Structure probing data (2A3 and DMS) for a 207-nucleotide construct. The 2A3 profile rests on 7,859 reads. For DMS the reverse transcriptase was MarathonRT. The reactions ran in a buffer of 150 mM KOAc, 10 mM MgCl2 and 150 mM bicine (pH 8.5), at 24 C. 2A3 adducts were read by reverse transcription with SuperScript II with manganese. Source: RMDB library OK3TST, as collected in RNAgym. Values cover nucleotides 27 to 156.
[RMDB]
RNA sequence: GGGAACGACUCGAGUAGAGUCGAAAAUUUUGCGUCUUUCGCCGUCGGUCAGUAACGGUAUCAUCGGUGACAUCGGGAUCCGUGACUUGUUGAAUCGUGCGCAGUUGCUGCUUCAGAAGCUCGAUGUGACGUGCGUCGGAACAAACGGUACGUUGAAUACGUUAAUGUAAUUCGUUACAUUAACGUAAAAAGAAACAACAACAACAAC
Reactivity to 2A3 in 0.01 (KOAc 150mM, MgCl2 10mM, bicine 150mM(pH8.5), 24C), signal-to-noise 8, nucleotides 027 to 156: u110u100u050u110g070c080g020u030c010u010u090u070c030g000c030c010g010u020c060g020g070u060c030a030g020u060a030a020c020g030g070u170a050u040c050a080u080c020g030g030u120g130a120c050a130u090c030g000g020g020a010u000c000c010g010u020g030a020c020u030u040g060u050u090g130a070a050u090c020g030u040g020c030g000c020a030g020u070u090g050c090u030g010c000u070u080c060a110g040a220a020g030c030u010c050g050a070u070g080u090g140a050c030g050u080g010c010g030u020c030g040g030a060a030c040a080a060a010c040g030g050u100a020c030g020u030u080g050a050a060
Reactivity to DMS in 0.01 (KOAc 150mM, MgCl2 10mM, bicine 150mM(pH8.5), 24C), signal-to-noise 4, nucleotides 027 to 156: u000u000u000u000g030c050g020u000c050u000u000u000c030g030c000c020g020u000c030g020g030u010c100a120g010u010a060a060c020g010g020u010a040u000c030a100u010c050g030g010u010g030a180c130a130u010c000g010g020g010a090u000c020c020g000u000g030a060c050u000u000g010u020u000g010a070a040u000c020g020u000g010c050g020c040a120g020u000u000g030c010u000g010c030u000u000c070a140g010a090a110g020c050u010c030g030a100u000g030u010g010a050c020g010u010g030c100g000u000c050g010g000a120a110c060a070a050a060c030g030g030u000a040c060g010u000u000g020a080a260